[RMDB]
RNA sequence: GGGAACGACUCGAGUAGAGUCGAAAAGAAUUGGUAUGUAAGCUACGACUUCCGGUAGCUGCGUCACACUUUAAGAGUGUGCAUACUGAGCCGAAGCUCAGCUUCGGUCCCCCAAGGGAAGCGCAAAGCUCCGACUAUGCUUCGGCAUAGUCGGAGCAAAAGAAACAACAACAACAAC
Reactivity to 2A3 in 0.01 (KOAc 150mM, MgCl2 10mM, bicine 150mM(pH8.5), 24C), signal-to-noise 1, nucleotides 027 to 126: g090a040a090u020u000g000g050u030a000u000g030u000a020a000g000c000u000a000c030g130a080c020u020u050c000c010g010g010u000a000g000c000u000g000c000g000u000c000a000c000a000c000u150u060u290a300a050g300a000g300u000g000u000g000c000a000u000a000c010u000g010a010g040c010c010g000a000a000g000c010u060c300a040g030c000u030u000c040g010g000u000c000c000c000c020c000a030a000g070g000g000a000a050g000c000g070c060a000a020a040